Structure probing data (2A3 and DMS) for a 170-nucleotide construct. Source: RMDB library 15KLIB, as collected in RNAgym. The reactions ran in a buffer of 150 mM KOAc, 10 mM MgCl2 and 150 mM bicine (pH 8.5), at 24 C. For 2A3 the reverse transcriptase was SuperScript II with manganese.
RNA sequence: GGGAACGACUCGAGUAGAGUCGAAAAUUCACAUUUAUUGGGGAGUACACUCGAGGAGUGGAAGGCGGGGAGACGGGGAUCCCGGGCUUACCCACGGGAACUGCUGGGUUCCCCUGAUGUCCAGUCCAACGCAGGACCUUCGGGUCCUGCAAAAGAAACAACAACAACAAC
Reactivity to 2A3 in 0.01 (KOAc 150mM, MgCl2 10mM, bicine 150mM(pH8.5), 24C), signal-to-noise 2, nucleotides 027 to 129: u070u030c060a030c090a070u080u120u170a160u150u120g030g010g000g000a030g000u030a000c080a010c040u030c010g030a050g000g000a030g050u090g010g110a030a040g000g000c030g000g000g000g000a060g020a020c040g010g000g000g000a000u000c010c000c010g000g000g000c020u050u150a090c030c000c000a040c130g030g000g000a030a030c000u070g070c010u090g010g000g000u010u020c000c000c010c000u060g000a100u030g070u090c000c000a000g060u040c060c000a020a010c030
Reactivity to DMS in 0.01 (KOAc 150mM, MgCl2 10mM, bicine 150mM(pH8.5), 24C), signal-to-noise 2, nucleotides 027 to 129: u010u050c080a020c160a040u080u000u000a010u010u000g000g000g000g140a030g020u020a100c220a060c030u040c010g030a040g110g050a090g010u050g050g050a030a060g050g040c100g040g070g030g050a010g040a070c140g000g070g030g010a030u010c000c050c040g000g000g000c050u020u070a030c070c000c010a160c260g020g030g050a000a090c000u000g030c080u030g000g000g050u010u010c020c020c000c060u050g000a070u020g000u050c120c060a130g010u130c050c010a060a180c150